[RMDB]
RNA sequence: GGGAACGACUCGAGUAGAGUCGAAAAACUGAGGCGUCGAGAUCUACUACAGUUUCGCCUUGGGUCUCUGCGGCGGCACGACCAGAGGAUCGUAGACGGUACUAGCCAGGGCAUCAUGAGGAGUGGCGUUGGAAUGGGCGAAGACGCCCCUCGCAUCGCCACUUACGCUAUUCGUAGCGUAAGUGGCAAAAGAAACAACAACAACAAC
Reactivity to 2A3 in 0.01 (KOAc 150mM, MgCl2 10mM, bicine 150mM(pH8.5), 24C), signal-to-noise 2, nucleotides 027 to 156: a010c090u100g000a030g030g020c010g020u040c050g080a010g020a240u030c060u130a100c010u040a040c080a090g020u070u010u070c000g000c000c010u010u010g110g000g040u020c020u000c030u050g020c010g020g000c000g000g030c080a020c030g050a060c030c000a030g030a030g080g000a050u050c050g000u060a030g010a060c020g020g000u050a100c080u080a020g050c050c060a010g010g000g080c040a070u070c020a050u240g050a030g070g000a000g010u110g000g020c010g010u020u030g030g010a170a180u100g040g010g000c060g030a040a020g100a010c060g040c000c000c000c000u030c000g030c010a090u120c050
Reactivity to DMS in 0.01 (KOAc 150mM, MgCl2 10mM, bicine 150mM(pH8.5), 24C), signal-to-noise 1, nucleotides 027 to 156: a130c090u000g010a080g000g010c010g080u000c040g040a120g010a060u000c060u000a130c000u000a150c010a170g000u000u000u000c000g070c000c000u020u010g000g050g030u000c030u000c040u000g000c090g050g000c070g000g030c100a050c060g000a100c050c050a130g010a100g060g000a030u000c040g020u000a090g030a060c020g000g030u000a090c110u000a090g010c050c000a130g000g020g000c070a110u040c060a090u010g000a140g030g010a050g020u000g020g000c030g020u000u000g000g030a060a090u000g000g000g030c010g030a080a150g000a080c020g010c000c000c000c010u000c040g010c070a140u020c060